Structure probing data (2A3) for a 207-nucleotide construct. Reactivities are given for positions 27 through 156.
RNA sequence: GGGAACGACUCGAGUAGAGUCGAAAAUGUUCAACGCAAGUUGAACGUCUUCAGUGACGGUUUGUCAGACUCUGUAGGCUGAGUUGGUUCGGGUGUUCUGGUUAUGGCAACCAGAACUAACGGACUGUUGGCAGACAGUGAUUGAAGAUCCGAGAUUUCACUACAUCGUGUUCGCACGAUGUAGUGAAAAAGAAACAACAACAACAAC
Reactivity to 2A3 in 0.01 (KOAc 150mM, MgCl2 10mM, bicine 150mM(pH8.5), 24C), signal-to-noise 2, nucleotides 027 to 156: u070g010u000u020c000a000a000c030g030c040a020a120g000u000u000g000a000a000c000g010u010c000u000u010c000a000g010u040g120a000c010g030g000u060u000u010g030u010c010a030g020a050c000u050c010u100g280u300a150g300g000c200u060g030a000g010u110u160g090g020u010u000c010g010g000g000u020g000u010u020c000u040g000g030u060u070a270u300g300g030c090a000a000c000c000a010g000a000a000c000u000a000a000c000g010g000a000c020u030g110u140u050g070g000c000a010g010a000c000a010g010u070g140a020u020u010g000a000a010g010a020u010c030c000g030a090g010a090u000u000